[RMDB]
RNA sequence: GGGAACGACUCGAGUAGAGUCGAAAAAAAAAGAUAUGGACUCAGACCCAACGACGGUACGCGAUGAAAUAUAAUCGGAAACGAUUAUAUGGAGCGUACCCAAGUUGCUGAGUCCUAAGUCAAAAAACAUUGGAAGAUCGUUCGCGAUCUUCCAAUGAAAAGAAACAACAACAACAAC
Reactivity to DMS in 0.01 (KOAc 150mM, MgCl2 10mM, bicine 150mM(pH8.5), 24C), signal-to-noise 1, nucleotides 027 to 126: a000a080a090a090a150g000a030u000a210u000g000g010a000c000u000c000a000g000a300c200c300c110a000a000c010g000a300c300g000g000u000a000c000g030c030g010a110u030g000a140a060a000u000a000u000a000a000u000c000g000g010a030a030a030c040g030a010u000u000a000u000a000u000g080g000a050g030c000g050u000a000c000c000c010a000a150g000u000u000g000c000u010g000a040g000u000c000c000u000a000a010g000u000c000a000a070a140a130a020a140
This 177-nucleotide RNA was probed chemically with DMS. The reactions ran in a buffer of 150 mM KOAc, 10 mM MgCl2 and 150 mM bicine (pH 8.5), at 24 C.